[RMDB]
RNA sequence: GGGAACGACUCGAGUAGAGUCGAAAAUGAAGCUUGCUGAACGCAUCGGUGUUACUGCCGCAGCCCGUGAACUCAGCCUGUAUGAAUCACAACUCUACAACUGGCGCAGUAAACAGCAAAAUCAGCAAUGCCACGGUACAUUCGUGUACCGUGGCAUAAAAGAAACAACAACAACAAC
Reactivity to 2A3 in 0.01 (KOAc 150mM, MgCl2 10mM, bicine 150mM(pH8.5), 24C), signal-to-noise 1, nucleotides 027 to 126: u190g060a030a060g100c030u030u110g000c000u000g030a100a000c000g060c030a040u160c120g060g070u130g040u070u050a030c030u080g040c060c080g040c020a020g010c050c000c010g030u020g030a040a030c040u010c060a010g060c000c030u090g020u090a080u130g040a010a010u050c040a020c010a070a170c040u080c020u120a030c040a170a110c030u120g020g070c110g040c000a000g000u040a010a020a100c040a010g080c010a050a050a000a200u040c010a010g080c000a000
Reactivity to DMS in 0.01 (KOAc 150mM, MgCl2 10mM, bicine 150mM(pH8.5), 24C), signal-to-noise 1, nucleotides 027 to 126: u000g060a170a070g000c120u000u000g010c010u000g000a030a120c200g010c030a070u010c220g020g000u020g000u000u000a020c020u000g000c010c160g040c070a040g030c140c100c100g000u020g000a060a030c110u000c030a000g020c070c140u000g050u000a100u030g010a000a110u000c090a040c240a090a160c200u000c100u020a010c090a120a140c060u020g000g020c070g060c010a000g000u000a070a010a010c050a140g020c070a040a030a090a060u000c000a000g000c030a090
An RNA of 177 nucleotides, treated with 2A3 and DMS and read out base by base. The RNA was probed in 150 mM KOAc, 10 mM MgCl2 and 150 mM bicine (pH 8.5) at 24 C. 2A3 adducts were read by reverse transcription with SuperScript II with manganese. It was measured as part of the RMDB library OK2TRN.